Structure probing data (2A3) for a 207-nucleotide construct.
RNA sequence: GGGAACGACUCGAGUAGAGUCGAAAAACAAGCAAGUCGAGAAUGAACCAAUCUCGUAAACUUGAGUUCAAUUGCAAAUAAAUGCUAACAAUAUUUUACCUUUUAAUCGUAAGACAGCCGUAGCUGUUUAAAAGUUUUUUGAUAACUUCGAGCAUUUAAUAUAUGCAGAGUUCGCUCUGCAUAUAUUAAAAGAAACAACAACAACAAC
Reactivity to 2A3 in 0.01 (KOAc 150mM, MgCl2 10mM, bicine 150mM(pH8.5), 24C), signal-to-noise 2, nucleotides 027 to 156: a000c020a030a010g130c000a050a000g120u100c000g000a000g000a020a040u130g030a070a030c050c030a030a140u010c010u010c010g090u100a060a020a020c000u040u080g030a050g080u070u000c000a080a060u080u060g010c020a050a000a140u130a140a130a020u070g020c040u050a050a060c050a150a070u110a120u050u200u090u210a190c010c000u090u040u000u150a060a120u120c030g010u020a020a020g010a000c000a010g000c030c040g120u130a070g010c010u020g020u010u030u050a010a050a000a000g000u030u000u010u020u080u160g050a060u040a070a010c000u050u010c010g000a040g010c010a000u060u000u000